[RMDB]
Source information
Structure probing data (2A3 and DMS) for a 170-nucleotide construct. For 2A3, 5,261 sequencing reads were counted. The reactions ran in a buffer of 150 mM KOAc, 10 mM MgCl2 and 150 mM bicine (pH 8.5), at 24 C. For DMS the reverse transcriptase was MarathonRT.
RNA sequence: GGGAACGACUCGAGUAGAGUCGAAAAGGGUGGGCCUUGGACCUCCAGGAGCCAUGGGAUCCGUGGAGUACCCGGGAUAUCCCUUCUCCACACUCCUUCCCCCCUGCGGGGCCCCCCCAUAAGAUGGAGAGACCGACGUUCGCGUCGGUCAAAAGAAACAACAACAACAAC
Reactivity to 2A3 in 0.01 (KOAc 150mM, MgCl2 10mM, bicine 150mM(pH8.5), 24C), signal-to-noise 4, nucleotides 027 to 129: g110g010g010u140g000g100g010c010c010u000u070g100g010a050c030c000u060c010c000a000g000g000a100g000c010c080a090u100g000g030g030a020u060c010c020g160u070g020g000a030g050u150a140c000c020c000g010g010g010a080u060a030u120c010c000c000u060u030c010u000c030c000a020c000a020c060u000c000c000u020u080c000c000c000c000c000c000u010g020c260g010g000g000g000c000c000c000c000c000c000c000a100u200a090a040g050a090u080g010g040a030g010a000
Reactivity to DMS in 0.01 (KOAc 150mM, MgCl2 10mM, bicine 150mM(pH8.5), 24C), signal-to-noise 2, nucleotides 027 to 129: g020g030g030u050g010g080g000c020c020u000u040g040g010a220c130c090u030c040c010a140g000g000a040g000c070c030a150u060g040g040g000a090u040c060c030g060u000g010g000a010g040u050a120c050c020c040g000g000g000a130u040a010u010c050c010c010u030u060c030u000c000c030a060c050a110c020u040c020c000u010u070c050c000c000c000c030c100u020g050c060g030g040g010g090c000c000c000c000c000c000c000a080u090a130a100g040a110u020g070g000a060g020a090